[RMDB]
RNA sequence: GGGAACGACUCGAGUAGAGUCGAAAAUGGCUUCCUCUAGAGUGACUAAUCCAAGAGACAGCAAGGAUUGACAGCCAUGACAGCACAGUGCCUUUCAUGACUUACUCUCCAAAGUUACAAACCUUUACUUUUGCUUUAUCUUAUUUGUUAGAGCAAACAUGCAGUAAAAUUUCGAUUUUACUGCAUGAAAAGAAACAACAACAACAAC
Reactivity to DMS in 0.01 (KOAc 150mM, MgCl2 10mM, bicine 150mM(pH8.5), 24C), signal-to-noise 3, nucleotides 027 to 156: u000g010g030c020u000u010c030c020u000c020u000a090g010a130g010u020g020a170c060u000a070a100u000c040c020a070a170g020a180g020a110c080a100g030c050a120a180g010g010a100u000u010g010a090c100a050g040c020c030a070u010g010a080c300a080g050c030a130c060a120g010u010g000c040c020u000u000u000c030a060u000g010a070c010u000u010a090c040u000c020u000c030c020a070a080a100g000u000u010a060c040a060a090a100c070c030u010u000u010a080c090u000u000u000u010g000c010u000u000u000a030u000c050u000u020a190u010u000u000g010u000u000a020g000a020g020c000a030a040a160
Reactivity to 2A3 in 0.01 (KOAc 150mM, MgCl2 10mM, bicine 150mM(pH8.5), 24C), signal-to-noise 9, nucleotides 027 to 156: u090g030g010c010u060u020c020c010u040c060u060a060g020a020g070u060g040a080c040u070a060a040u030c030c030a080a020g040a010g030a110c030a030g040c040a070a060g040g000a030u030u050g020a040c030a010g010c010c010a020u030g020a020c020a020g020c020a030c030a100g100u090g070c010c000u030u050u040c030a040u060g030a020c010u020u090a050c010u050c020u010c050c020a070a070a070g030u080u050a110c060a060a100a090c030c000u080u160u160a110c060u030u060u140u020g010c000u010u050u010a020u040c030u110u200a210u260u200u130g040u030u030a030g000a000g030c000a010a000a020